[RMDB]
RNA sequence: GGGAACGACUCGAGUAGAGUCGAAAAGCUUCUUCUUGUUCUUGAGGGCCUUCCUUCGUCGGUGAUCCUGCCUCUCCCUGUCGGUGAAUCCUCCCCUGAGAGGCCUCUUCCUAGGUCCGGAGUCUACUUCCAUCUGGUCCGUUCGGGCCCUCUUCGCCACUAGCUGUAAGUUCGCUUACAGCUAGUGAAAAGAAACAACAACAACAAC
Reactivity to DMS in 0.01 (KOAc 150mM, MgCl2 10mM, bicine 150mM(pH8.5), 24C), signal-to-noise 2, nucleotides 027 to 156: g000c030u000u000c030u000u000c050u000u000g010u020u010c050u010u000g020a060g010g000g040c070c010u000u020c000c010u000u000c060g030u000c060g030g010u010g000a090u010c030c020u000g010c050c030u000c020u000c010c040c030u000g000u000c060g030g010u000g000a140a170u000c050c020u000c010c010c000c090u000g010a110g010a090g040g020c020c060u010c060u000u000c060c060u000a110g040g010u000c030c000g000g010a080g020u010c100u000a090c110u000u020c030c040a120u000c040u000g040g000u000c020c010g020u000u000c090g030g020g060c000c010c010u000c030u000u030c040g010c140
Reactivity to 2A3 in 0.01 (KOAc 150mM, MgCl2 10mM, bicine 150mM(pH8.5), 24C), signal-to-noise 2, nucleotides 027 to 156: g010c010u040u010c000u090u040c040u030u210g050u100u130c050u080u120g030a010g000g010g000c000c030u090u130c030c030u080u080c070g110u030c060g050g040u110g020a050u050c000c070u060g010c030c010u000c020u040c000c030c030u100g120u190c110g050g090u110g210a080a220u200c050c000u000c030c060c000c010u050g010a090g000a010g040g020c020c010u070c040u030u050c010c030u020a020g030g000u000c040c000g030g000a010g010u050c060u070a090c040u090u030c020c000a070u100c090u080g010g000u000c040c030g080u060u180c060g000g000g000c000c010c000u000c000u020u000c000g000c020

Structure probing data (DMS and 2A3) for a 207-nucleotide construct. Reactivities are given for positions 27 through 156. For DMS, 5,478 sequencing reads were counted.